[RMDB]
RNA sequence: GGGAACGACUCGAGUAGAGUCGAAAAUGGUAAACCUAAAGAGAUCAAUUUCAUCAAUGGAUGGGAUCACUAUGGAUCACCUUCUAGUCAAUGGGGUAGGGGUCAAUACAUCCGUGAGUCAGACGGAACAGUUAGACUUGAGGGCUUAAUCAAAGGGUAUCUACGUUCCAUUCGUGGAACGUAGAUAAAAAGAAACAACAACAACAAC
Reactivity to DMS in 0.01 (KOAc 150mM, MgCl2 10mM, bicine 150mM(pH8.5), 24C), signal-to-noise 2, nucleotides 027 to 156: u010g040g050u000a030a080a130c050c000u010a080a070a140g000a170g010a090u010c020a080a110u000u000u010c040a080u000c020a100a070u000g000g000a120u000g020g010g030a030u000c020a090c090u000a140u010g050g020a080u000c010a070c010c010u000u000c040u000a130g060u000c070a060a110u000g010g000g010g000u000a090g000g000g000g010u010c080a030a110u010a010c040a060u000c020c000g030u000g020a080g000u010c090a210g000a080c030g010g000a060a080c140a090g000u010u000a110g000a080c040u010u000g020a110g000g030g000c080u000u000a110a080u010c050a030a020a070g000g010g010
Reactivity to 2A3 in 0.01 (KOAc 150mM, MgCl2 10mM, bicine 150mM(pH8.5), 24C), signal-to-noise 4, nucleotides 027 to 156: u100g000g000u060a040a020a080c020c020u060a070a120a040g060a010g010a020u050c060a050a110u130u160u060c030a070u010c040a080a170u140g080g000a010u020g020g030g020a010u020c010a030c100u120a140u180g080g020a020u050c020a060c070c000u040u040c010u020a040g050u040c080a080a110u080g000g000g000g030u050a040g010g010g000g000u030c010a020a060u050a080c030a050u030c030c010g020u040g020a040g090u090c030a010g020a090c020g030g010a050a060c020a030g020u070u090a020g000a050c000u020u040g030a060g020g000g000c000u050u100a050a030u070c070a060a030a030g020g020g020
Structure probing data (DMS and 2A3) for a 207-nucleotide construct. Source: RMDB library OK3TST, as collected in RNAgym. Reactivities are given for positions 27 through 156. The RNA was probed in 150 mM KOAc, 10 mM MgCl2 and 150 mM bicine (pH 8.5) at 24 C. For 2A3, 2,775 sequencing reads were counted. For DMS the reverse transcriptase was MarathonRT. Values are in units of 0.01, from 0 to 300, in steps of 10. For 2A3 the reverse transcriptase was SuperScript II with manganese.